[RMDB]
RNA sequence: GGGAACGACUCGAGUAGAGUCGAAAAGAAUUCUGGCUCCACCACUUAGCUUGUGACCUCGGACAAGUUACUUAACCUCUCUGUGCUAUAGUUUCAGGGCCUAUAAAAUGGUAACAAUGGUACGUACCAGCCGGGCACGGUGGCUUACGCCUGUAAAGUGGAUAGUACUAUUCGUAGUACUAUCCACAAAAGAAACAACAACAACAAC
Reactivity to DMS in 0.01 (KOAc 150mM, MgCl2 10mM, bicine 150mM(pH8.5), 24C), signal-to-noise 1, nucleotides 027 to 156: g000a070a030u000u000c110u010g000g020c010u010c050c080a040c020c060a070c070u020u000a220g000c020u000u030g040u000g050a020c070c000u010c070g070g000a110c000a090a170g000u020u000a010c050u000u000a120a040c050c020u000c010u030c040u000g000u000g000c050u020a090u010a190g020u020u000u010c300a100g060g020g000c040c070u000a170u000a080a110a070a090u010g010g010u000a040a150c000a070a130u010g020g010u010a040c140g010u010a090c000c020a090g010c080c050g020g000g000c040a050c070g050g070u000g010g020c050u000u000a060c110g010c020c020u000g020u010a130a120a110
Reactivity to 2A3 in 0.01 (KOAc 150mM, MgCl2 10mM, bicine 150mM(pH8.5), 24C), signal-to-noise 2, nucleotides 027 to 156: g060a020a030u170u080c040u070g000g000c000u000c010c020a020c000c000a040c040u060u080a050g100c030u040u120g000u080g110a190c010c030u090c110g020g000a030c060a120a090g020u040u020a010c020u130u110a080a080c020c020u050c000u010c000u030g020u030g080c040u120a090u050a290g080u100u080u040c080a020g010g010g020c000c000u080a080u160a050a110a030a060u140g020g010u030a090a020c020a100a000u050g050g060u130a050c060g030u040a040c020c000a000g010c010c000g000g000g000c000a000c050g030g000u010g020g000c000u030u020a020c020g000c000c000u030g090u120a070a080a040

An RNA of 207 nucleotides, treated with DMS and 2A3 and read out base by base. The data come from the RNA Mapping Database (RMDB), library OK3TST. For 2A3, 1,125 sequencing reads were counted. Reactivities are given for positions 27 through 156. 2A3 adducts were read by reverse transcription with SuperScript II with manganese.